Source: RMDB library OK2TST, as collected in RNAgym. The record gives the reactivity of an RNA of 177 nucleotides to DMS and 2A3. Reactivities are rounded to 0.1 and cut off at 0 and 3. For 2A3, 1,980 sequencing reads were counted. Reactivities are given for positions 27 through 126. The RNA was probed in 150 mM KOAc, 10 mM MgCl2 and 150 mM bicine (pH 8.5) at 24 C.

RNA sequence: GGGAACGACUCGAGUAGAGUCGAAAAAUGAGCGCCGUGCGGCUGGCCCGCGGAUUCACCGGCCGGGCCAAGAUCGUCAAGUUCUCCGGCUGCUACCACGGACACGUCGACGCAUUGCUCGCCGACGUAGUCGGUUCCUGUUCGCAGGAACCGACUAAAAAGAAACAACAACAACAAC
Reactivity to DMS in 0.01 (KOAc 150mM, MgCl2 10mM, bicine 150mM(pH8.5), 24C), signal-to-noise 3, nucleotides 027 to 126: a070u010g000a100g040c060g020c040c020g030u000g010c020g000g000c050u010g000g000c010c010c000g010c030g020g010a300u010u010c260a130c050c010g000g030c180c020g000g000g000c000c020a040a030g000a080u010c030g000u010c130a080a130g000u000u000c010u000c050c030g010g020c000u010g010c000u000a170c060c050a070c110g000g000a120c120a040c040g000u000c020g010a010c010g020c090a210u010u020g010c230u010c030g020c000c010g000a020c020g020
Reactivity to 2A3 in 0.01 (KOAc 150mM, MgCl2 10mM, bicine 150mM(pH8.5), 24C), signal-to-noise 2, nucleotides 027 to 126: a010u100g030a030g020c000g010c000c030g010u080g010c020g030g000c000u000g000g000c000c000c000g020c030g000g010a120u240u150c090a090c220c000g070g100c100c030g000g030g000c000c000a010a010g020a230u060c020g110u080c050a130a120g020u050u030c040u020c040c000g000g020c030u080g000c010u050a060c000c030a040c070g100g040a040c020a010c070g010u030c010g020a000c000g020c070a260u020u250g010c050u050c030g000c000c010g000a000c000g000